[RMDB]
This 177-nucleotide RNA was probed chemically with DMS and 2A3. Source: RMDB library RFM100, as collected in RNAgym. For 2A3, 1,163 sequencing reads were counted. Reactivities are given for positions 27 through 126.
RNA sequence: GGGAACGACUCGAGUAGAGUCGAAAAAGCGACUACGGUCGCAAAACUGCGAUGAAGCGGGAGAUUGCGCCAAAAAGGCGGUAACUUUCGUGGAGCAUGUCCGUCGUCUGUUUGUUUGCAGACGAAAUCGGACACGAUGAUUCGUCAUCGUGUCCGAAAAAGAAACAACAACAACAAC
Reactivity to DMS in 0.01 (KOAc 150mM, MgCl2 10mM, bicine 150mM(pH8.5), 24C), signal-to-noise 1, nucleotides 027 to 126: a070g020c000g020a000c000u000a190c260g060g000u010c000g010c000a010a010a110a110c030u000g000c000g000a140u030g000a170a170g000c000g000g000g000a020g000a080u000u000g030c000g000c000c000a080a080a030a250a200g010g000c000g010g000u000a050a010c030u010u000u000c000g010u000g000g000a060g020c000a000u020g000u050c050c000g020u080c000g000u000c010u000g000u000u070u020g030u020u040u070g000c010a020g000a000c000g000a000a130a030
Reactivity to 2A3 in 0.01 (KOAc 150mM, MgCl2 10mM, bicine 150mM(pH8.5), 24C), signal-to-noise 2, nucleotides 027 to 126: a000g020c000g010a000c000u010a040c300g090g000u000c000g000c000a000a000a010a000c010u010g030c000g220a250u020g010a020a000g010c000g010g040g020a030g020a070u040u110g020c010g000c000c000a130a210a070a030a010g080g000c110g000g060u090a030a010c020u010u030u020c000g010u040g000g020a000g010c010a020u150g040u000c000c030g030u020c000g010u010c000u020g030u050u090u050g280u070u070u130g000c000a000g000a000c000g050a030a010a010